RNA sequence: GGGAACGACUCGAGUAGAGUCGAAAACGUGUCCGUCGGCGUAGCCGACAACAUGCCCAGGUAGCCCAGACCUUCAAGGCUACGGUGCGUUGCGACGCACGGUCUGAUUCGUCACAACGACGUUCACAAGAUCGGAUCACUUUCGAGUGAUCCGAAAACAUAUGUUUGAUUUCGAUCAAACAUAUGUAAAAGAAACAACAACAACAAC
Reactivity to 2A3 in 0.01 (KOAc 150mM, MgCl2 10mM, bicine 150mM(pH8.5), 24C), signal-to-noise 6, nucleotides 027 to 156: c030g000u000g010u040c110c100g000u000c000g000g010c270g170u220a090g020c000c010g010a000c000a000a000c010a010u090g030c000c010c010a010g000g020u010a000g010c010c060c190a020g000a010c000c000u010u000c010a010a000g000g000c000u000a000c000g020g000u000g000c000g000u010u070g060c170g110a010c000g000c000a000c010g000g000u000c000u000g010a070u070u050c000g000u010c020a060c070a300a160c250g020a000c010g020u100u120c070a070c020a120a070g030a170u040c000g000g000a000u000c010a010c010u030u110u180c230g080a020g000u000g000a000u000c000c000g000a000a000a000
Reactivity to DMS in 0.01 (KOAc 150mM, MgCl2 10mM, bicine 150mM(pH8.5), 24C), signal-to-noise 3, nucleotides 027 to 156: c050g020u000g010u000c070c100g040u000c020g000g040c010g040u010a120g040c010c000g020a020c010a030a010c020a030u010g020c030c020c030a110g050g030u010a050g000c000c010c150a140g000a100c020c040u000u000c120a100a290g010g010c010u000a010c020g030g000u010g000c000g070u000u010g040c110g030a080c020g000c020a090c030g000g010u000c040u000g020a220u010u010c020g000u010c030a070c090a120a160c000g010a070c030g000u000u000c030a080c060a080a130g000a160u000c000g000g000a030u000c000a000c000u000u000u010c260g030a050g020u010g000a010u000c010c000g000a000a010a100